This 177-nucleotide RNA was probed chemically with DMS.
[RMDB]
RNA sequence: GGGAACGACUCGAGUAGAGUCGAAAACUUUCUAUACGUGUUGCUAAAAUCGUUUCAAUUGCUUGCUUUUUAUCUUUGGCAUUAUUCAAAAUUGCUUUUAAUAUAUCAUCUGAAGACGUGUCGCCAGAGGUAAGAAGAGGUUCGCCUCUUCUUACCUAAAAGAAACAACAACAACAAC
Reactivity to DMS in 0.01 (KOAc 150mM, MgCl2 10mM, bicine 150mM(pH8.5), 24C), signal-to-noise 2, nucleotides 027 to 126: c160u010u010u000c030u020a130u000a070c080g010u000g010u020u000g020c030u010a060a060a150a110u010c090g000u000u000u000c050a070a170u010u000g000c070u000u010g020c050u000u000u010u000u010a050u020c040u010u000u000g010g020c040a060u000u000a080u010u010c160a050a040a110a060u000u020g000c090u000u000u000u000a020a070u010a060u000a070u010c040a040u010c050u000g000a060a100g010a050c160g000u010g000u000c050g010c060c060a130g000

For DMS the reverse transcriptase was MarathonRT. The RNA was probed in 150 mM KOAc, 10 mM MgCl2 and 150 mM bicine (pH 8.5) at 24 C.